This 177-nucleotide RNA was probed chemically with 2A3 and DMS. The data come from the RNA Mapping Database (RMDB), library M2PK50. The RNA was probed in 150 mM KOAc, 10 mM MgCl2 and 150 mM bicine (pH 8.5) at 24 C.

[RMDB]
RNA sequence: GGGAACGACUCGAGUAGAGUCGAAAAGCCAUGAGUUUCGACUCAUGGCAAAAGCCCGUCAGCGCUACGAUGCAAGCGCAAGCGCGUCCAUCGUAAAUGACAAAAUUCUCGGGUUCGCCCGAGAAAACCGUCAAAUAGCUUUCGAGCUAUUUGACGGAAAAGAAACAACAACAACAAC
Reactivity to 2A3 in 0.01 (KOAc 150mM, MgCl2 10mM, bicine 150mM(pH8.5), 24C), signal-to-noise 2, nucleotides 027 to 126: g000c000c000a010u000g000a010g000u060u070u180c140g020a010c010u000c000a000u000g010g000c000a010a000a000a000g020c000c000c000g010u010c000a050g080c080g050c200u050a000c000g000a010u010g050c110a100a080g030c010g000c050a120a120g250c120g000c000g050u040c030c000a010u010c010g000u010a040a070a120u030g010a000c030a040a110a000a150u040u010c000u000c000g010g030g000u000u030c220g050c030c000c000g000a020g020a000a000a000a010
Reactivity to DMS in 0.01 (KOAc 150mM, MgCl2 10mM, bicine 150mM(pH8.5), 24C), signal-to-noise 2, nucleotides 027 to 126: g000c000c010a000u000g000a010g030u010u000u010c140g040a030c000u000c000a000u000g000g000c010a000a010a070a200g020c030c010c020g020u000c020a020g020c160g010c150u000a010c020g020a020u000g000c100a290a070g000c000g000c070a090a120g000c150g030c060g000u010c200c010a030u000c020g020u000a010a160a090u010g000a040c020a130a060a080a130u000u010c000u020c000g030g000g020u000u010c260g010c010c000c030g000a050g000a000a040a110a100